[RMDB]
RNA sequence: GGGAACGACUCGAGUAGAGUCGAAAAGCCUUGUUGUUCGCAACAAGGCAAAUGGGACGGGUCGGGAGGGGGAUACUCGCGGACCCAAGAAGAAUCCAGACUAAAGGCCAAGGUUCGCCUUGGCCAACCUAUUGGUUUUCUUCGGAAAACCAAUAGGAAAAGAAACAACAACAACAAC
Reactivity to 2A3 in 0.01 (KOAc 150mM, MgCl2 10mM, bicine 150mM(pH8.5), 24C), signal-to-noise 1, nucleotides 027 to 126: g010c000c000u010u010g010u010u010g040u050u070c240g000c110a000a000c000a000a000g000g040c000a000a020a000u050g010g010g080a070c100g000g000g130u200c100g060g040g100a190g000g000g050g000g000a020u080a110c000u010c020g040c020g080g020a050c000c000c020a010a010g050a030a000g010a010a030u070c050c030a010g070a100c080u120a060a070a170g000g000c010c000a000a000g000g000u030u070c130g050c030c010u010u000g010g000c000c010a000a000
Reactivity to DMS in 0.01 (KOAc 150mM, MgCl2 10mM, bicine 150mM(pH8.5), 24C), signal-to-noise 2, nucleotides 027 to 126: g000c000c000u010u000g010u000u000g030u000u030c190g020c000a000a000c000a000a040g000g030c000a000a000a070u000g000g010g020a120c170g020g000g010u000c040g000g000g010a300g020g000g030g000g000a070u000a010c040u000c010g010c060g000g000a040c030c020c000a050a050g000a080a040g010a120a110u000c010c010a070g000a160c120u020a080a080a080g000g000c000c000a020a000g010g000u000u010c200g000c010c010u000u000g000g000c030c010a040a040

An RNA of 177 nucleotides, treated with 2A3 and DMS and read out base by base. 2A3 adducts were read by reverse transcription with SuperScript II with manganese. It was measured as part of the RMDB library M2PK50. DMS adducts were read by reverse transcription with MarathonRT.